[RMDB]
RNA sequence: GGGAACGACUCGAGUAGAGUCGAAAAGAUAUGGAGACAGGUCAAUGAGCCACUAAGGGAGAAAUUGGAUCGGAAACGAUCCUCUUUCAUCGAUCUUAGGUGGCUCAUUGACCUGUCUCCUAAGUCACGAAAUGUUAAUCUUCGGAUUAACAUUUCGAAAAGAAACAACAACAACAAC
Reactivity to DMS in 0.01 (KOAc 150mM, MgCl2 10mM, bicine 150mM(pH8.5), 24C), signal-to-noise 2, nucleotides 027 to 126: g020a080u010a300u000g010g000a000g020a000c000a000g000g010u000c010a000a020u010g010a030g010c000c000a030c000u000a030a010g020g000g010a050g030a000a020a010u010u000g020g010a010u000c000g010g000a060a100a300c000g010a010u000c000c000u000c000u010u000u000c020a300u010c230g000a060u010c000u000u000a010g020g020u010g010g000c000u000c000a000u000u000g000a000c000c000u000g000u000c000u000c000c000u000a000a030g010u000c080a200
An RNA of 177 nucleotides, treated with DMS and read out base by base. It was measured as part of the RMDB library TTRINS. For DMS, 2,603 sequencing reads were counted.